An RNA of 177 nucleotides, treated with DMS and 2A3 and read out base by base.
[RMDB]
RNA sequence: GGGAACGACUCGAGUAGAGUCGAAAAAAGCGAUUGGGCAGCGAUUUUAAUGCAUACACGGCUACCGUUCUGCCACAUGUGAUCGAUCGGCUGGGAGACAGCAGGGACACAGUCCGCGAGAAGGCGCACCAUCCAAUGUCUUCGGACAUUGGAUGGUAAAAGAAACAACAACAACAAC
Reactivity to DMS in 0.01 (KOAc 150mM, MgCl2 10mM, bicine 150mM(pH8.5), 24C), signal-to-noise 2, nucleotides 027 to 126: a120a070g010c020g000a050u000u000g000g000g030c010a060g000c060g000a130u010u000u000u010a080a080u000g010c010a060u000a100c140a110c070g000g020c020u000a110c090c060g020u000u010c050u010g000c030c010a080c130a040u030g030u000g000a070u000c020g010a130u010c090g010g070c020u000g000g000g020a080g010a120c110a010g020c060a070g020g000g010a040c060a030c110a030g040u000c040c060g010c090g000a090g020a040a080g030g010c050g010c110
Reactivity to 2A3 in 0.01 (KOAc 150mM, MgCl2 10mM, bicine 150mM(pH8.5), 24C), signal-to-noise 1, nucleotides 027 to 126: a010a010g110c050g030a080u080u060g030g080g000c020a000g000c040g000a010u000u000u060u300a150a040u140g020c020a040u090a210c070a020c130g040g010c050u080a080c000c000g030u100u030c040u040g030c020c020a050c010a020u060g120u100g070a120u070c010g060a050u000c030g030g000c030u020g000g020g070a060g000a000c030a040g070c000a010g060g000g000a020c060a000c000a130g090u000c020c060g040c040g000a030g040a100a020g060g020c060g000c050
DMS adducts were read by reverse transcription with MarathonRT. It was measured as part of the RMDB library OK2TRN.